[RMDB]
RNA sequence: GGGAACGACUCGAGUAGAGUCGAAAAGCCAGUGAAUACUUACUGAGUACCUGCUGUGAACUAGACUGUUCUAAGCAUUGAGGAUGCAGCUGCAAACUGGAUAGAAACGGCGCCUGCCCUCAUAAAAGUAGAUAUCUUAUUUCGAUAAGAUAUCUACAAAAGAAACAACAACAACAAC
Reactivity to DMS in 0.01 (KOAc 150mM, MgCl2 10mM, bicine 150mM(pH8.5), 24C), signal-to-noise 6, nucleotides 027 to 126: g020c040c010a010g020u000g010a080a140u020a160c150u000u000a050c030u010g000a120g010u000a150c050c020u000g010c010u010g000u000g010a030a030c040u000a130g000a140c210u010g000u000u000c000u000a190a040g010c030a090u000u000g010a030g010g010a130u010g010c000a030g020c080u000g000c010a040a060a090c050u000g000g000a200u010a060g010a050a150a180c190g010g000c050g010c300c020u000g010c020c000c010u000c020a010u010a030a040a060a160
Reactivity to 2A3 in 0.01 (KOAc 150mM, MgCl2 10mM, bicine 150mM(pH8.5), 24C), signal-to-noise 7, nucleotides 027 to 126: g010c000c000a010g010u010g070a130a120u170a300c060u080u030a020c010u040g020a010g060u070a100c000c010u010g000c010u020g000u010g030a010a010c010u030a080g280a230c110u080g030u030u000c010u050a060a010g000c020a080u020u070g010a010g010g020a040u200g000c000a010g010c020u080g000c020a030a100a140c110u300g050g030a150u080a180g060a020a080a020c020g020g000c020g000c010c010u010g000c000c000c000u000c010a020u120a020a090a010a010